[RMDB]
RNA sequence: GGGAACGACUCGAGUAGAGUCGAAAACUGACCUUGUUCGCAAGGUCAGAAAGGGAAAUGGACUGACCGGCGCCGACCGCCAAACAACCGGCAAAAAGAAAAAAACUGUAAGCUUCGGCUUACAGAACAAGUUAUAUAGGUUCGCCUAUAUAACUUGAAAAGAAACAACAACAACAAC
Reactivity to DMS in 0.01 (KOAc 150mM, MgCl2 10mM, bicine 150mM(pH8.5), 24C), signal-to-noise 4, nucleotides 027 to 126: c000u000g000a010c000c000u010u000g020u010u000c190g020c010a010a000g000g000u000c000a010g000a020a070a100g010g010g010a090a080a090u000g000g010a080c050u010g010a110c100c020g010g000c100g020c040c030g000a080c050c020g000c060c040a050a070a110c110a080a100c060c000g000g000c070a050a050a070a060a110g030a020a010a060a080a060a080a130c010u000g000u000a000a000g000c000u000u020c240g030g010c000u000u000a000c000a000g000a060a080
Reactivity to 2A3 in 0.01 (KOAc 150mM, MgCl2 10mM, bicine 150mM(pH8.5), 24C), signal-to-noise 4, nucleotides 027 to 126: c000u000g010a000c000c000u000u000g010u040u030c070g010c110a000a000g020g000u010c000a000g020a060a020a000g050g000g040a050a100a100u130g010g020a020c040u040g040a050c010c020g010g030c010g040c020c010g100a240c010c020g020c040c010a070a100a070c030a040a030c020c010g000g000c030a020a050a020a070a030g080a050a120a010a020a010a010a010c000u010g000u010a000a000g000c000u030u140c250g080g010c000u040u000a000c000a000g000a000a000
Chemical mapping of a 177-nucleotide RNA with DMS and 2A3. Reactivities are rounded to 0.1 and cut off at 0 and 3. For DMS the reverse transcriptase was MarathonRT. The 2A3 profile rests on 6,433 reads.